[RMDB]
RNA sequence: GGGAACGACUCGAGUAGAGUCGAAAACCUCCAAACUUCGGUUUGGAGGAAAAGGAGCCAAAAUAUGAACGGAAAGGGAAGACGGAACCCAAGUCUAUAAAAAAAGUACCAUGUUCGCAUGGUACAAGCUACACUACCUGUUCGCAGGUAGUGUAGCAAAAGAAACAACAACAACAAC
Reactivity to DMS in 0.01 (KOAc 150mM, MgCl2 10mM, bicine 150mM(pH8.5), 24C), signal-to-noise 1, nucleotides 027 to 126: c010c010u000c020c000a000a000a000c000u000u030c190g040g020u000u000u010g000g010a040g000g000a010a030a130a070g020g000a090g000c020c010a130a070a120a080u000a060u000g010a070a120c040g020g000a030a030a100g000g020g010a040a090g010a030c030g010g030a190a140c070c020c020a040a080g000u000c070u030a100u020a030a010a080a090a030a060a060g000u000a010c000c000a000u000g000u000u020c100g000c000a000u000g000g010u000a020c000a030a020
Reactivity to 2A3 in 0.01 (KOAc 150mM, MgCl2 10mM, bicine 150mM(pH8.5), 24C), signal-to-noise 1, nucleotides 027 to 126: c010c010u010c010c000a000a000a000c000u020u060c180g120g020u010u000u000g000g000a070g000g000a030a020a000a010g040g020a000g030c050c030a030a080a000a070u300a080u110g020a060a000c030g020g060a030a060a040g080g010g010a030a030g020a010c070g010g030a030a060c000c000c000a020a010g020u000c050u050a210u250a080a130a020a020a000a000a030g000u000a000c000c000a000u010g030u040u060c230g000c100a000u000g000g000u000a000c010a000a000